[RMDB]
RNA sequence: GGGAACGACUCGAGUAGAGUCGAAAAGGCCCAGGUCGGAAACGGAGCAGGUCAAAACUCCCGUGCUGAUCAGUAGUGGGAUCGCGCCUGUGAAUAGCCACUGCACUCCAGCCUGAGCAACAUAGCGCAACUAUCUCUAGUUCGCUAGAGAUAGUUGAAAAGAAACAACAACAACAAC
Reactivity to DMS in 0.01 (KOAc 150mM, MgCl2 10mM, bicine 150mM(pH8.5), 24C), signal-to-noise 6, nucleotides 027 to 126: g010g010c010c000c020a070g010g020u010c040g010g010a040a130a080c100g010g000a190g020c050a050g010g020u010c120a060a070a160a120c140u000c020c020c030g010u000g020c040u000g000a070u010c090a080g020u000a040g020u010g020g010g010a020u000c060g010c220g000c050c020u010g000u000g000a080a080u000a100g010c040c020a050c030u000g010c070a180c110u000c020c020a050g000c010c030u010g010a070g000c010a080a070c100a050u010a080g000c140g000
Reactivity to 2A3 in 0.01 (KOAc 150mM, MgCl2 10mM, bicine 150mM(pH8.5), 24C), signal-to-noise 6, nucleotides 027 to 126: g110g000c010c010c010a000g020g010u040c030g010g040a070a090a100c040g010g020a050g000c040a020g040g020u110c000a020a030a060a180c040u030c010c010c000g020u030g000c010u070g040a270u150c120a010g030u050a020g080u050g030g000g010a030u040c030g000c030g020c040c040u050g000u030g040a100a110u100a060g010c020c010a040c050u040g000c050a040c060u000c000c000a020g010c000c010u030g000a010g010c010a020a060c020a100u150a030g090c070g010
Structure probing data (DMS and 2A3) for a 177-nucleotide construct. The reactions ran in a buffer of 150 mM KOAc, 10 mM MgCl2 and 150 mM bicine (pH 8.5), at 24 C. For DMS, 6,689 sequencing reads were counted.